[RMDB]
The record gives the reactivity of an RNA of 177 nucleotides to DMS. Values are in units of 0.01, from 0 to 300, in steps of 10. The reactions ran in a buffer of 150 mM KOAc, 10 mM MgCl2 and 150 mM bicine (pH 8.5), at 24 C. It was measured as part of the RMDB library OK2TST.
RNA sequence: GGGAACGACUCGAGUAGAGUCGAAAACUAGAUUUUGAAUCAUGAGUAUAUGGAUCAGGUAUCUAGGAUGCCGGCCAUAAAAGAUCAACCUGCGGCAGCGGCGAAAGCUCGCUCCUUCACGUCGAUAUAAUUACCCUCGGUUCGCCGAGGGUAAUUAAAAAGAAACAACAACAACAAC
Reactivity to DMS in 0.01 (KOAc 150mM, MgCl2 10mM, bicine 150mM(pH8.5), 24C), signal-to-noise 1, nucleotides 027 to 126: c020u010a130g000a070u010u030u020u010g000a100a030u000c080a170u010g010a190g000u010a130u010a000u010g000g000a030u000c010a050g060g020u010a010u000c010u000a020g000g000a050u000g030c010c060g000g020c030c070a010u000a010a060a070a100g000a050u010c020a060a030c050c060u010g020c300g000g020c140a030g040c020g000g020c000g010a090a070a100g010c010u020c050g010c020u000c300c010u000u000c040a010c160g000u000c070g000a040u010a080